Overview: An RNA of 177 nucleotides, treated with DMS and 2A3 and read out base by base. It was measured as part of the RMDB library TTRDES. The RNA was probed in 150 mM KOAc, 10 mM MgCl2 and 150 mM bicine (pH 8.5) at 24 C.
[RMDB]
RNA sequence: GGGAACGACUCGAGUAGAGUCGAAAAGAUAUGGACCGGACCAGGGAGAGCCUAUUCGGAAACGAAUAGAGCUCAUCGAUCUGGAAACGGUCCUAAGUCAAAAGCUUUGGGCUUCGGCCCAAAGCAACUAGGAAAAAAGGUUCGCCUUUUUUCCUAGAAAAGAAACAACAACAACAAC
Reactivity to DMS in 0.01 (KOAc 150mM, MgCl2 10mM, bicine 150mM(pH8.5), 24C), signal-to-noise 2, nucleotides 027 to 126: g010a040u010a100u030g010g010a000c010c000g030g000a210c010c000a010g010g000g000a020g010a030g010c010c000u000a010u000u010c010g000g000a050a000a090c000g000a010a010u010a000g010a170g000c010u000c010a080u000c200g000a050u000c000u000g000g000a060a170a220c010g000g010u000c000c010u000a000a090g000u000c000a100a170a190a190g010c000u000u000u000g010g000g030c000u000u020c300g050g000c000c000c000a000a000a010g030c020a020a060
Reactivity to 2A3 in 0.01 (KOAc 150mM, MgCl2 10mM, bicine 150mM(pH8.5), 24C), signal-to-noise 2, nucleotides 027 to 126: g000a000u020a000u100g000g000a000c000c010g040g080a030c020c000a000g000g040g020a050g000a010g020c000c000u000a000u000u000c000g000g040a030a000a030c000g010a000a000u010a000g050a050g020c000u020c000a010u090c010g010a040u000c000u000g020g000a300a300a040c050g010g010u000c000c000u000a010a000g000u000c030a050a040a070a250g010c000u000u000u000g000g040g000c000u070u140c300g220g000c000c010c020a000a010a000g000c000a010a000